[RMDB]
Chemical mapping of a 177-nucleotide RNA with 2A3 and DMS.
For 2A3 the reverse transcriptase was SuperScript II with manganese.
For 2A3, 4,517 sequencing reads were counted.
For DMS the reverse transcriptase was MarathonRT.

RNA sequence: GGGAACGACUCGAGUAGAGUCGAAAACGAUGUGUAAUGACAACAUCAAAGUUUGGCCCAUGCUUCUUUAACCUGUGUAUCAUGGCAUCUUUACCCUAACAUGCAUGCUUAAAGCACCAAGGGGACGCGAUAAUAAAACCUUCGGGUUUUAUUAUCGAAAAGAAACAACAACAACAAC
Reactivity to 2A3 in 0.01 (KOAc 150mM, MgCl2 10mM, bicine 150mM(pH8.5), 24C), signal-to-noise 4, nucleotides 027 to 126: c010g000a030u010g050u010g020u090a140a210u230g170a080c040a070a030c000a090u070c040a050a070a060g030u020u060u060g070g000c000c020c000a010u060g030c030u050u070c000u070u130u090a060a060c000c030u050g010u020g020u060a040u130c030a030u060g040g030c010a020u010c020u080u130u180a130c020c010c000u020a040a020c030a030u040g070c010a000u030g010c020u080u170a100a110a040g000c010a020c060c030a070a050g060g000g000g010a010c050g040
Reactivity to DMS in 0.01 (KOAc 150mM, MgCl2 10mM, bicine 150mM(pH8.5), 24C), signal-to-noise 6, nucleotides 027 to 126: c070g000a130u000g000u000g010u000a110a130u010g010a150c160a120a040c020a010u000c010a090a090a210g010u000u000u000g000g020c010c010c020a100u000g010c050u000u000c040u010u000u000a100a130c050c020u000g020u000g010u000a040u000c090a080u000g000g000c030a050u000c060u000u000u000a140c060c050c060u010a060a090c210a050u000g000c090a060u010g000c110u000u010a080a080a120g010c060a060c040c100a090a090g010g000g000g010a100c290g000